An RNA of 177 nucleotides, treated with DMS and 2A3 and read out base by base. For 2A3 the reverse transcriptase was SuperScript II with manganese. Conditions: 150 mM KOAc, 10 mM MgCl2 and 150 mM bicine (pH 8.5), 24 C. High DMS reactivity at an A or C suggests that its Watson-Crick edge is free. Reactivities are given for positions 27 through 126. For DMS the reverse transcriptase was MarathonRT.
RNA sequence: GGGAACGACUCGAGUAGAGUCGAAAACAUCACCAACACGAUGCCUCAUCGAAGCAAAAGGUUCGCUGAAUUAUGAUUGCGUGGCACGCUCGGUCAAGCUCGUGUGGUAUCACACACAUGGCGCCAGACGUUUUUUGAGGUUCGCCUCAAAAAACGUAAAAGAAACAACAACAACAAC
Reactivity to DMS in 0.01 (KOAc 150mM, MgCl2 10mM, bicine 150mM(pH8.5), 24C), signal-to-noise 3, nucleotides 027 to 126: c110a130u060c090a080c050c010a040a120c120a090c040g020a050u020g010c050c030u000c290a040u000c060g020a010a100g020c120a070a080a110a120g000g030u010u010c020g000c040u000g000a060a060u020u030a130u000g000a150u000u010g000c000g060u050g020g000c040a040c130g010c000u010c090g000g010u020c080a090a130g010c000u030c060g000u000g000u000g010g050u040a040u020c130a080c080a020c020a080c050a060u000g000g010c000g010c030c060a110g000
Reactivity to 2A3 in 0.01 (KOAc 150mM, MgCl2 10mM, bicine 150mM(pH8.5), 24C), signal-to-noise 5, nucleotides 027 to 126: c010a030u070c020a020c040c010a030a040c010a010c050g020a030u130g040c000c010u050c080a070u010c030g080a070a000g050c040a040a070a060a060g080g050u030u020c010g000c050u070g040a080a070u270u090a110u210g120a100u030u140g010c010g030u050g030g030c050a010c050g010c030u010c010g020g000u040c030a050a000g000c010u010c040g000u000g000u030g000g010u060a080u200c050a060c000a000c000a000c010a110u110g040g000c000g000c010c000a020g040